[RMDB]
RNA sequence: GGGAACGACUCGAGUAGAGUCGAAAAAUGGAAUCUGCCCGUCAGGCGUGGGAGGAUUCAGGACUAGAAAUCAACGAAACUAACGCGCCUCGCGUGGGGGUGGCUAUUGGGUCCGGCAUCGGAGGGACUGGGUACUAAAUUUCGAUUUAGUACCCAGAAAAGAAACAACAACAACAAC
Reactivity to 2A3 in 0.01 (KOAc 150mM, MgCl2 10mM, bicine 150mM(pH8.5), 24C), signal-to-noise 3, nucleotides 027 to 126: a000u050g020g030a040a070u040c020u090g200c000c000c030g020u050c030a020g030g000c010g010u010g010g010g010a030g030g000a040u050u040c040a060g110g010a020c050u080a070g060a080a110a050u050c040a030a130c070g020a040a010a010c010u010a020a010c020g020c000g010c020c020u020c020g000c010g020u130g040g010g000g010g020u030g060g000c030u040a070u090u090g060g000g000u040c030c000g030g020c050a040u110c040g010g030a040g010g040g020a020
Reactivity to DMS in 0.01 (KOAc 150mM, MgCl2 10mM, bicine 150mM(pH8.5), 24C), signal-to-noise 5, nucleotides 027 to 126: a080u010g010g000a140a080u000c040u000g010c020c010c020g000u000c270a040g010g010c030g050u000g010g010g010a060g000g010a160u000u000c010a110g010g000a030c040u010a120g010a080a100a230u010c020a080a100c140g010a040a030a130c040u010a020a030c020g010c010g000c020c010u010c260g010c050g010u010g020g000g000g010g010u000g010g000c040u000a060u010u000g010g000g010u000c050c020g010g010c080a060u000c100g020g010a110g000g000g000a220